The record gives the reactivity of an RNA of 177 nucleotides to DMS and 2A3.
RNA sequence: GGGAACGACUCGAGUAGAGUCGAAAAAUGUCAAAUUUUUGGCCAUUGUCACUGACUGUCUGCAGAUUCUAGCCUAUGGUAAUCAGGAGUCCAAGCUCAUCAUCUUGGCUUCUCAGGGACCUCAGGAAUCUAUAAAACGAUUCGUCGUUUUAUAGAUAAAAGAAACAACAACAACAAC
Reactivity to DMS in 0.01 (KOAc 150mM, MgCl2 10mM, bicine 150mM(pH8.5), 24C), signal-to-noise 9, nucleotides 027 to 126: a060u000g010u000c080a050a080a180u010u000u000u000u000g010g010c020c050a060u000u000g010u000c040a090c060u000g000a090c060u000g010u000c030u000g010c050a060g010a120u000u000c040u000a080g010c030c020u000a080u000g000g010u000a050a070u010c120a050g010g000a040g010u010c020c010a020a030g000c210u000c190a070u010c190a090u000c010u000u000g000g000c030u000u000c010u000c060a090g010g000g000a060c050c040u000c130a060g010g010a150
Reactivity to 2A3 in 0.01 (KOAc 150mM, MgCl2 10mM, bicine 150mM(pH8.5), 24C), signal-to-noise 5, nucleotides 027 to 126: a000u120g020u060c050a090a060a120u140u120u040u090u080g040g000c020c020a040u010u110g050u050c020a030c090u040g060a020c020u040g040u100c020u050g000c000a020g030a140u140u010c020u080a030g020c010c000u110a160u130g030g000u050a060a070u070c030a010g050g000a010g040u000c040c010a010a010g000c030u040c090a220u050c010a050u010c080u010u010g020g000c000u010u010c010u000c020a020g030g020g060a030c010c010u030c040a030g060g090a070
Source information: 2A3 adducts were read by reverse transcription with SuperScript II with manganese. The data come from the RNA Mapping Database (RMDB), library OK2TRN.